[RMDB]
RNA sequence: GGGAACGACUCGAGUAGAGUCGAAAAGCAGGACAUGCCCGCGCGAUCGUGGUGGCCACCGGGGUCGGCACAGCCGCACACCGCGCGAUCUCGGCUGUCGCCGACGUGGAAGUAUCAGCCGGGGUGAGAGCGGUACUGAGUUCGCUCAGUACCGCUCAAAAGAAACAACAACAACAAC
Reactivity to DMS in 0.01 (KOAc 150mM, MgCl2 10mM, bicine 150mM(pH8.5), 24C), signal-to-noise 1, nucleotides 027 to 126: g030c070a080g020g000a060c140a080u000g010c040c000c000g000c090g020c070g000a030u000c120g000u010g000g020u000g050g020c060c070a090c070c060g000g020g060g000u000c010g000g000c010a080c090a050g000c030c010g110c190a110c120a100c020c050g020c050g020c080g000a040u010c080u000c030g000g000c000u020g000u000c160g040c000c010g000a040c050g030u000g020g000a050a110g020u000a040u020c060a070g010c030c000g010g000g010g000u020g000a190
An RNA of 177 nucleotides, treated with DMS and read out base by base. DMS adducts were read by reverse transcription with MarathonRT. The RNA was probed in 150 mM KOAc, 10 mM MgCl2 and 150 mM bicine (pH 8.5) at 24 C. Source: RMDB library OK2TST, as collected in RNAgym.